RNA sequence: GGGAACGACUCGAGUAGAGUCGAAAACAAACAAAACAAAGUCGUACAAAAUCGCCUAAAACGUGACAAAAAGAAGUCACGAAAGAAAACGACUCGAAAAGGCGAAGUGACGAAAGAACGUCACAAACGUGUGACAUGCGUUCGCGCAUGUCACACGAAAAGAAACAACAACAACAAC
Reactivity to 2A3 in 0.01 (KOAc 150mM, MgCl2 10mM, bicine 150mM(pH8.5), 24C), signal-to-noise 1, nucleotides 027 to 126: c050a270a000a000c030a000a010a130a000c040a300a260a000g000u000c000g000u080a010c000a000a290a000a070u000c000g000c000c000u000a030a030a030a030c000g000u020g000a000c010a000a150a000a000a000g080a150a000g040u000c000a000c000g000a050a050a000g060a040a030a030a030c030g000a010c000u050c040g190a170a000a020a000g020g000c000g000a010a000g040u020g000a000c040g180a040a270a000g220a260a050c000g000u000c000a000c000a000a100a000
An RNA of 177 nucleotides, treated with 2A3 and read out base by base. For 2A3, 663 sequencing reads were counted. 2A3 adducts were read by reverse transcription with SuperScript II with manganese. Conditions: 150 mM KOAc, 10 mM MgCl2 and 150 mM bicine (pH 8.5), 24 C. The data come from the RNA Mapping Database (RMDB), library OK1LIB.